[RMDB]
RNA sequence: GGGAACGACUCGAGUAGAGUCGAAAAGACGAUAUCUCCUCUGGAUCGGGAAUCCAUGGUGUACGUUCAGUCACCCAAACUCCAUCUACAUAGAUCAGGACUGACAGAGCAGUCGCGCCAAACCCGACACCUAGUUUAGCUUCGGCUAAACUAGGUGAAAAGAAACAACAACAACAAC
Reactivity to DMS in 0.01 (KOAc 150mM, MgCl2 10mM, bicine 150mM(pH8.5), 24C), signal-to-noise 2, nucleotides 027 to 126: g010a130c100g030a110u000a140u000c030u010c010c020u000c180u010g000g000a050u020c020g020g000g010a230a140u000c060c110a030u000g010g000u020g020u000a040c070g020u000u040c070a130g040u010c070a080c020c020c040a030a130a120c180u000c040c020a060u000c080u000a100c120a180u030a030g000a070u020c070a160g020g010a070c090u010g000a040c060a060g030a110g000c050a060g000u010c040g000c050g000c050c000a030a100a060c030c000c020g000a260
Reactivity to 2A3 in 0.01 (KOAc 150mM, MgCl2 10mM, bicine 150mM(pH8.5), 24C), signal-to-noise 2, nucleotides 027 to 126: g040a020c070g010a020u050a110u110c020u030c020c010u020c060u040g010g000a070u020c040g040g040g040a030a170u000c030c020a050u090g000g000u010g020u040a030c040g000u030u080c020a020g010u000c030a050c020c030c000a010a030a170c050u040c040c010a050u000c030u100a170c060a250u290a050g050a060u100c050a070g050g000a000c020u020g000a020c010a010g030a000g060c010a020g020u080c050g000c010g000c030c000a030a030a030c000c000c000g020a020
Source: RMDB library OK2TST, as collected in RNAgym. An RNA of 177 nucleotides, treated with DMS and 2A3 and read out base by base. In probing experiments dimethyl sulfate is read out at A N1 and C N3, which are open when not base-paired. The reactions ran in a buffer of 150 mM KOAc, 10 mM MgCl2 and 150 mM bicine (pH 8.5), at 24 C. The DMS profile rests on 889 reads.